An RNA of 177 nucleotides, treated with 2A3 and DMS and read out base by base. The DMS profile rests on 4,709 reads. For 2A3, 3,761 sequencing reads were counted.
RNA sequence: GGGAACGACUCGAGUAGAGUCGAAAACCGCUACUCUUCGGAGUAGCGGAUACAUCUCGCGUCCGGGCCUUACCGUAGGACCAACGGUAAGGCCAGAGAUGAAGGGAGAGAUUUUCGAAUCUCUCAACCGUUGAAAGAGAUUCGUCUCUUUCAACGGAAAAGAAACAACAACAACAAC
Reactivity to 2A3 in 0.01 (KOAc 150mM, MgCl2 10mM, bicine 150mM(pH8.5), 24C), signal-to-noise 2, nucleotides 027 to 126: c000c000g000c000u000a000c010u010c010u000u110c290g120g010a000g010u010a000g000c000g000g010a010u010a010c010a010u000c000u000c020g070c030g190u040c010c000g020g000g010c000c000u010u010a000c000c000g010u030a070g060g230a090c040c020a020a010c010g000g000u010a000a010g000g000c000c000a000g000a000g010a000u030g030a080a100g200g070g010a010g000a000g010a000u020u010u040u060c090g080a050a010u000c010u000c000u030c010a000a060
Reactivity to DMS in 0.01 (KOAc 150mM, MgCl2 10mM, bicine 150mM(pH8.5), 24C), signal-to-noise 4, nucleotides 027 to 126: c010c010g010c000u000a000c000u000c010u010u010c190g020g000a020g030u000a000g010c000g010g000a030u010a060c070a030u000c000u000c010g010c130g010u010c020c040g010g000g000c000c000u000u000a000c000c000g000u010a050g010g010a110c190c150a070a030c000g000g000u000a010a000g000g030c000c000a000g000a010g000a020u000g000a200a140g000g000g000a010g000a010g020a030u000u000u010u010c160g000a030a010u000c000u000c000u000c010a080a120